[RMDB]
RNA sequence: GGGAACGACUCGAGUAGAGUCGAAAAGUGAGAACUGCCAUGAUUGCAACGGGAUCACAUUACAAGAUCCGAAGUAUCUUAAACAAAUUUAACAUACCAGUACAAGAUGCAAUAUGUGCUGGUGAUGGUCGUAAGAGCACUUCGGUGCUCUUACGACAAAAGAAACAACAACAACAAC
Reactivity to 2A3 in 0.01 (KOAc 150mM, MgCl2 10mM, bicine 150mM(pH8.5), 24C), signal-to-noise 2, nucleotides 027 to 126: g120u130g000a030g040a000a020c000u060g190c130c020a220u090g050a060u060u090g050c050a110a050c040g100g010g000a000u000c000a000c110a120u130u300a040c000a020a000g050a030u000c000c020g000a120a060g000u090a070u030c010u030u160a000a080a080c100a050a260a210u090u180u110a000a020c020a000u050a000c000c000a000g000u000a000c000a020a020g030a160u050g300c000a000a000u050a020u240g040u000g000c000u000g000g000u000g000a000u010g000
Reactivity to DMS in 0.01 (KOAc 150mM, MgCl2 10mM, bicine 150mM(pH8.5), 24C), signal-to-noise 1, nucleotides 027 to 126: g000u000g000a050g010a060a160c110u000g000c000c000a120u030g000a070u000u000g000c190a000a180c110g000g040g000a070u010c000a080c080a150u040u040a230c300a080a120g000a000u040c000c050g040a000a250g000u000a130u000c000u130u000a000a090a040c110a180a100a000u000u130u020a160a230c230a080u000a000c000c000a080g000u030a000c080a090a000g000a030u110g030c300a170a150u080a130u000g000u000g000c000u000g000g000u030g120a000u000g000
An RNA of 177 nucleotides, treated with 2A3 and DMS and read out base by base. For DMS, 720 sequencing reads were counted.